[RMDB]
RNA sequence: GGGAACGACUCGAGUAGAGUCGAAAAGCGCCGUGUGGUACUGGCGCCUAGUACAGAGGCCGUACGCAGACGUACAUGAUGCAUAGGCGCGGCGCACGUACGUACCAUCUGCUAGUACCGUACCUCGAUCUGAAUAGUAUUUCGAUACUAUUCAGAUAAAAGAAACAACAACAACAAC
Reactivity to 2A3 in 0.01 (KOAc 150mM, MgCl2 10mM, bicine 150mM(pH8.5), 24C), signal-to-noise 9, nucleotides 027 to 126: g010c010g000c010c010g020u050g030u070g020g020u020a010c020u030g020g000c010g000c000c000u020a020g010u040a030c040a050g100a080g090g030c040c030g010u020a010c030g000c080a090g080a240c050g020u040a050c030a110u190g070a160u180g120c060a100u060a130g090g000c010g000c010g010g000c010g000c000a030c040g080u100a020c030g000u020a080c010c010a120u030c020u040g000c010u010a010g000u010a020c000c020g010u080a100c010c030u050c070g040
Reactivity to DMS in 0.01 (KOAc 150mM, MgCl2 10mM, bicine 150mM(pH8.5), 24C), signal-to-noise 9, nucleotides 027 to 126: g010c020g020c020c010g020u000g020u010g010g010u000a050c080u010g010g010c010g030c030c010u000a040g010u000a060c080a110g010a170g010g020c300c120g010u000a030c040g020c130a090g010a130c070g010u000a040c040a110u010g010a130u000g020c070a110u000a050g010g000c010g010c010g010g000c010g020c030a090c110g000u000a040c060g000u000a130c030c040a100u000c060u000g010c020u000a030g010u000a080c030c030g010u010a070c090c060u000c120g010

This 177-nucleotide RNA was probed chemically with 2A3 and DMS. The 2A3 profile rests on 108,640 reads.